[RMDB]
RNA sequence: GGGAACGACUCGAGUAGAGUCGAAAAAGUAUAAGUAGGAACAGAAUAAACAGGAUUUCUAGAACCAGAGUAACCUGAAUAACCAGAUCCAGAAUAGUGGCUAGAAUGGCUGGAAUGACUUCUGUGAGAGUCCUACUAUCUUCGGAUAGUAGGACUCAAAAGAAACAACAACAACAAC
Reactivity to DMS in 0.01 (KOAc 150mM, MgCl2 10mM, bicine 150mM(pH8.5), 24C), signal-to-noise 1, nucleotides 027 to 126: a050g040u000a010u010a040a110g000u010a060g020g020a160a000c050a050g000a060a050u000a050a070a060c050a040g010g010a130u000u030u000c090u010a050g010a130a130c050c040a100g000a100g020u040a100a080c080c010u000g000a100a050u000a040a070c170c060a050g000a040u010c070c010a110g000a080a050u010a050g000u000g010g040c000u000a010g010a110a060u000g010g000c000u040g000g010a010a110u010g010a120c180u000u050c020u000g030u000g000a260